Conditions: 150 mM KOAc, 10 mM MgCl2 and 150 mM bicine (pH 8.5), 24 C. Structure probing data (DMS and 2A3) for a 177-nucleotide construct. For DMS the reverse transcriptase was MarathonRT. 2A3 adducts were read by reverse transcription with SuperScript II with manganese. The data come from the RNA Mapping Database (RMDB), library RFM100. Reactivities are rounded to 0.1 and cut off at 0 and 3.
RNA sequence: GGGAACGACUCGAGUAGAGUCGAAAAGUUUGCGGAGUAAUCUGUGGAUUGUGCUAUAAUUGCUAUUUGUGAAUAUGCAACAGCCUGGGUUAAAUAUGCACUUUCAUGGUGCUUUUAAUUUCAGGAAGGUAUUGACAUGGUUCGCCAUGUCAAUACCAAAAGAAACAACAACAACAAC
Reactivity to DMS in 0.01 (KOAc 150mM, MgCl2 10mM, bicine 150mM(pH8.5), 24C), signal-to-noise 2, nucleotides 027 to 126: g010u000u020u000g010c050g000g000a120g000u040a020a020u010c000u000g010u010g030g000a040u000u010g030u020g000c080u000a060u060a080a190u000u010g000c000u000a040u000u020u050g050u020g010a030a030u010a030u000g010c070a020a020c170a080g000c000c000u010g000g000g000u000u000a020a000a040u020a030u040g030c000a010c000u000u000u050c300a130u090g000g020u000g000c020u000u000u000u000a000a010u000u010u030c000a010g000g000a050a100
Reactivity to 2A3 in 0.01 (KOAc 150mM, MgCl2 10mM, bicine 150mM(pH8.5), 24C), signal-to-noise 4, nucleotides 027 to 126: g020u020u060u070g000c020g030g010a030g000u090a010a080u000c000u010g020u060g070g000a060u070u040g090u030g040c010u050a040u100a250a270u120u050g000c020u030a080u070u100u090g150u050g160a070a020u120a060u240g010c090a040a020c020a100g050c000c000u000g010g000g010u000u000a000a050a000u190a080u190g010c000a000c040u100u200u170c150a150u290g040g000u010g000c000u010u010u000u000a050a060u000u150u300c000a000g000g020a000a040